Source information: Structure probing data (2A3 and DMS) for a 177-nucleotide construct. It was measured as part of the RMDB library OK2TRN. DMS adducts were read by reverse transcription with MarathonRT.

[RMDB]
RNA sequence: GGGAACGACUCGAGUAGAGUCGAAAAUUACGGACGGAUUAAUUCGGAUUUGGCGUCAAAACAAGGCUCGUAUUCUGUCCGCCGAAACCGAAGGAAUUGGAAAGCACGGCUGCAACCUUGGCUUCAACUAAUACGUACCUUUCGAGGUACGUAUUAGAAAAGAAACAACAACAACAAC
Reactivity to 2A3 in 0.01 (KOAc 150mM, MgCl2 10mM, bicine 150mM(pH8.5), 24C), signal-to-noise 6, nucleotides 027 to 126: u110u070a040c040g020g050a010c020g020g020a000u050u110a040a090u070u030c010g000g030a030u030u020u030g030g020c030g040u120c050a010a050a060a070c030a070a030g070g010c040u060c150g080u110a090u100u060c030u030g030u020c010c010g000c000c000g020a030a010a000c010c000g010a010a010g020g030a040a070u100u080g060g070a100a020a010g040c030a010c060g030g010c020u050g000c020a040a050c000c010u030u040g050g000c010u060u050c030a060a050
Reactivity to DMS in 0.01 (KOAc 150mM, MgCl2 10mM, bicine 150mM(pH8.5), 24C), signal-to-noise 9, nucleotides 027 to 126: u000u010a100c070g010g010a100c050g010g000a060u000u000a070a140u010u000c020g010g010a170u000u000u000g000g010c010g010u000c150a070a050a080a060c070a050a070g000g000c050u020c100g010u010a090u000u000c050u000g010u000c210c020g010c020c010g010a020a020a070c020c010g000a040a030g000g000a040a070u000u010g000g010a060a090a100g010c070a060c080g000g000c030u000g000c060a060a080c040c040u000u000g010g010c050u000u000c090a070a200